[RMDB]
RNA sequence: GGGAACGACUCGAGUAGAGUCGAAAAGAUAUGGACCUAGAUCUCUACUAGUGGCGUUGAAAUCGGAAACGAUGGAGCCACAUAGAUCUCUAGGUCCUAAGUCAAAACAGUAUCUUCGGAUACUGAAUCGGUAUUAUGAGUUCGCUCAUAAUACCGAAAAAGAAACAACAACAACAAC
Reactivity to 2A3 in 0.01 (KOAc 150mM, MgCl2 10mM, bicine 150mM(pH8.5), 24C), signal-to-noise 2, nucleotides 027 to 126: g040a010u070a040u130g000g000a010c000c000u000a000g000a040u020c010u010c010u020a110c020u080a130g020u000g010g020c050g180u300u100g030a030a040a000u010c010g020g020a090a030a020c000g000a010u010g040g020a020g000c000c000a000c000a000u020a000g000a000u020c010u030c000u010a000g060g000u010c000c000u000a000a000g000u000c000a000a020a040a120c000a000g000u010a000u000c020u030u130c300g150g000a000u000a000c010u000g000a050a130
Reactivity to DMS in 0.01 (KOAc 150mM, MgCl2 10mM, bicine 150mM(pH8.5), 24C), signal-to-noise 3, nucleotides 027 to 126: g010a030u010a300u000g000g010a020c000c010u000a000g000a020u000c210u000c010u000a030c280u010a110g050u000g000g000c000g030u000u010g000a090a110a050u000c000g000g000a160a090a180c020g010a010u010g000g000a170g010c000c010a000c020a080u000a000g000a020u010c180u000c000u000a000g010g010u000c000c000u000a010a040g010u000c010a090a110a120a200c000a000g000u000a000u000c000u000u000c210g020g000a010u000a000c000u000g000a090a070

Chemical mapping of a 177-nucleotide RNA with 2A3 and DMS. Source: RMDB library TTRDEL, as collected in RNAgym. The 2A3 profile rests on 5,701 reads. Conditions: 150 mM KOAc, 10 mM MgCl2 and 150 mM bicine (pH 8.5), 24 C.